This 177-nucleotide RNA was probed chemically with DMS and 2A3. For DMS, 23,225 sequencing reads were counted. The reactions ran in a buffer of 150 mM KOAc, 10 mM MgCl2 and 150 mM bicine (pH 8.5), at 24 C.
RNA sequence: GGGAACGACUCGAGUAGAGUCGAAAACUAUGAAUGUAGCUAAGAGUGUGCUCGAUAAAGAUGUAGCUACUACCCGUAAGCUGGAGCGUAUGUCUGAGUUAGCUAUGACUGCAAUGUAUAAGCAGGCACCAUGUUCCUUAUUCGUAAGGAACAUGGUAAAAGAAACAACAACAACAAC
Reactivity to DMS in 0.01 (KOAc 150mM, MgCl2 10mM, bicine 150mM(pH8.5), 24C), signal-to-noise 9, nucleotides 027 to 126: c060u000a080u000g010a110a100u010g010u000a010g010c010u010a070a100g000a110g020u000g020u010g010c030u000c020g010a130u010a070a110a070g000a070u010g010u000a030g010c010u000a050c040u010a100c090c060c080g010u010a060a080g020c050u000g000g010a040g010c040g010u010a030u000g010u000c030u000g000a100g010u000u000a050g000c030u000a030u010g010a090c020u000g000c010a060a070u010g020u010a090u000a090a130g010c010a020g000g010c150
Reactivity to 2A3 in 0.01 (KOAc 150mM, MgCl2 10mM, bicine 150mM(pH8.5), 24C), signal-to-noise 9, nucleotides 027 to 126: c030u040a110u240g130a140a060u160g030u030a010g000c010u020a070a020g060a040g060u090g020u060g060c010u010c050g080a110u150a140a140a020g120a060u130g060u150a000g010c010u030a010c010u030a050c010c030c030g040u030a040a020g020c030u040g050g000a020g010c030g020u050a030u090g190u000c030u040g080a070g130u050u040a010g020c010u010a020u070g060a050c010u010g000c010a030a150u130g100u130a090u040a180a030g010c010a010g020g010c000